[RMDB]
RNA sequence: GGGAACGACUCGAGUAGAGUCGAAAAGUGCUUGAGCACUGUCGUUGCGACGAGAGUUCGAUGCGAUGUCGAUCCGGAAAGACAUCGAUCCGGAAAGCAUUUGCUCUCUUUGUGCUCUUGCACGAAAGGGACAGCGGUGGUUCGCCAUCGUUGUCCCAAAAGAAACAACAACAACAAC
Reactivity to DMS in 0.01 (KOAc 150mM, MgCl2 10mM, bicine 150mM(pH8.5), 24C), signal-to-noise 8, nucleotides 027 to 126: g010u000g010c010u000u010g010a020g010c010a000c000u010g010u000c030g020u040u020g020c070g010a030c050g000a010g000a030g010u020u020c230g000a050u020g010c010g010a070u030g000u030c120g000a220u010c010c000g000g000a020a090a220g010a220c300a140u030c040g000a200u000c010c020g000g010a030a110a200g000c010a010u000u000u030g030c010u000c010u000c010u000u010u020g010u000g010c000u000c020u000u000g000c000a010c010g010a030a070a070
Reactivity to 2A3 in 0.01 (KOAc 150mM, MgCl2 10mM, bicine 150mM(pH8.5), 24C), signal-to-noise 9, nucleotides 027 to 126: g000u000g000c000u000u000g000a000g000c000a010c030u030g020u010c050g150u170u300g150c130g020a010c020g000a000g000a000g020u070u210c120g030a040u040g010c010g020a030u090g140u280c070g030a060u000c000c010g000g010a040a050a010g090a030c080a140u120c070g010a040u000c000c000g010g000a020a020a010g000c000a000u010u030u180g000c000u000c000u000c000u070u090u090g000u000g000c000u000c000u000u000g000c000a000c000g000a030a010a000